[RMDB]
RNA sequence: GGGAACGACUCGAGUAGAGUCGAAAAUUAUCUCUUUUGGGAUAACUACCCUUCCAAGAUCAUCUAUUCUUCUAACUAUACCUGUUGCUUUCAUAUUUUUUAAUCCCUCCAUAAAUUACUUUAAGUUCACGCAUAGUAGUUUCGACUACUAUGCGUGAAAAGAAACAACAACAACAAC
Reactivity to 2A3 in 0.01 (KOAc 150mM, MgCl2 10mM, bicine 150mM(pH8.5), 24C), signal-to-noise 3, nucleotides 027 to 126: u020u000a020u000c020u000c000u150u050u160u300g000g010g000a010u010a040a030c040u140a100c000c000c030u030u040c050c000a040a030g010a180u020c030a030u000c070u090a160u110u000c020u070u000c010u070a030a180c020u020a060u090a170c010c040u040g020u050u080g020c010u120u050u040c020a030u040a180u140u060u020u010u030u030a030a030u040c020c000c000u010c010c000a030u070a100a200a050u110u090a090c090u060u090u100a100a050g020u010u000

Annotation
Structure probing data (2A3) for a 177-nucleotide construct. Values cover nucleotides 27 to 126.